[RMDB]
RNA sequence: GGGAACGACUCGAGUAGAGUCGAAAAAGUGGACGAUACAUUACACCGAGCAAUUAAAUUACUGUCCACGCUCGGCCAUUAUUCUGGCGAGAGCCAGUUCACAGACAGCUAGCGAAAGGAAGGACCUAGCAGGAAGGAAGGAGCUAGCGCUAGGCCACGUCCAUAAUAAUUUCGAUUAUUAUGGACGAAAAGAAACAACAACAACAAC
Reactivity to 2A3 in 0.01 (KOAc 150mM, MgCl2 10mM, bicine 150mM(pH8.5), 24C), signal-to-noise 6, nucleotides 027 to 156: a000g000u010g000g010a020c040g040a040u090a140c090a140u170u090a060c080a040c030c020g000a010g000c020a050a120u110u140a200a070a060u180u160a150c060u130g010u000c010c000a000c000g000c000u010c000g010g000c000c010a100u220u180a050u140u080c000u010g000g000c010g010a060g010a010g040c000c000a000g010u080u110c140a090c010a060g090a030c030a020g020c010u030a010g000c040g110a100a040a040g050g030a050a050g020g010a040c000c000u010a000g010c020a020g050g050a040a020g030g000a010a020g030g030a030g000c010u010a010g000c020g010c040u030a030g000g020c010c000a020
Reactivity to DMS in 0.01 (KOAc 150mM, MgCl2 10mM, bicine 150mM(pH8.5), 24C), signal-to-noise 3, nucleotides 027 to 156: a090g020u000g000g000a050c030g020a230u000a060c090a090u000u010a160c040a100c000c040g000a160g010c050a090a090u000u000a040a070a200u010u000a020c020u010g020u010c030c050a080c050g030c050u000c040g010g000c030c030a100u000u000a100u010u010c040u010g020g020c030g010a220g010a260g010c040c000a070g020u000u000c080a140c050a140g000a130c040a080g020c020u010a030g010c030g020a140a090a110g000g010a090a080g010g020a110c070c000u000a040g020c030a080g000g020a070a060g020g000a040a080g010g010a120g010c030u000a030g000c070g030c050u010a030g000g010c000c040a090